RNA sequence: GGGAACGACUCGAGUAGAGUCGAAAAGACUUCUCGGACUGGCGGGUAACACAUAGAGGCGGGCCGCUAGGCGGGAUGCGAACCAAUCUAACAGUGCCGCAAGCCCGAAGCCCGGGCGAGGGACUCUAGGUAGCUCACAGGGCGAGGGUAAGUAUUGGAAUGGAUUAAGGUUCGCCUUAAUCCAUUCAAAAGAAACAACAACAACAAC
Reactivity to 2A3 in 0.01 (KOAc 150mM, MgCl2 10mM, bicine 150mM(pH8.5), 24C), signal-to-noise 1, nucleotides 027 to 156: g010a020c010u020u000c000u030c040g000g170a170c030u030g020g010c020g110g030g080u240a230a030c060a010c010a120u220a120g050a030g080g030c080g030g000g000c020c000g000c000u010a030g010g050c000g040g010g000a030u020g010c020g020a020a030c020c000a030a030u090c020u070a100a100c000a090g030u040g190c000c010g050c050a080a040g010c030c040c000g100a130a010g010c010c000c000g000g080g020c030g000a050g020g080g030a000c020u020c070u150a070g120g000u030a030g040c010u020c010a120c100a060g000g010g050c000g000a010g000g000g010u020a040a000g010u060a060u080u250g110
Chemical mapping of a 207-nucleotide RNA with 2A3. For 2A3 the reverse transcriptase was SuperScript II with manganese. Conditions: 150 mM KOAc, 10 mM MgCl2 and 150 mM bicine (pH 8.5), 24 C. Source: RMDB library OK3TST, as collected in RNAgym.